RNA sequence: GGGAACGACUCGAGUAGAGUCGAAAACGCCAUGUUAGGGGGCGCGGAACCCCCUGACCCUAUAUAUACAGGGACCGGGGUCGCCCUGUUGGGGGUCGCCAUGUGACCCCCUGACUUUAUAUAUACACGCGUGUAUACGAUUCGUCGUAUACACGCGAAAAGAAACAACAACAACAAC
Reactivity to DMS in 0.01 (KOAc 150mM, MgCl2 10mM, bicine 150mM(pH8.5), 24C), signal-to-noise 1, nucleotides 027 to 126: c080g030c010c090a020u040g020u000u020a000g000g000g000g000g010c010g050c080g000g010a240a130c000c000c000c000c000u000g010a040c030c020c000u010a140u070a090u010a130u070a010c070a030g000g030g060a030c140c030g000g010g120g040u030c050g020c000c000c000u000g020u040u020g010g020g000g000g040u000c060g000c140c130a110u070g060u020g020a200c000c000c000c000c000u000g000a000c010u020u020u100a070u030a040u040a090u040a010c190a180
Reactivity to 2A3 in 0.01 (KOAc 150mM, MgCl2 10mM, bicine 150mM(pH8.5), 24C), signal-to-noise 2, nucleotides 027 to 126: c080g060c000c020a070u070g050u020u010a000g000g000g010g010g000c010g040c010g030g070a090a100c000c020c050c000c010u000g030a030c010c040c030u090a060u040a030u010a010u040a300c080a070g000g000g040a000c020c090g050g000g000g050u140c100g080c040c020c000u020g040u040u140g050g000g010g000g000u040c080g030c060c090a210u240g020u170g170a300c000c000c000c000c010u000g000a000c000u000u110u010a080u000a000u000a010u050a130c060a020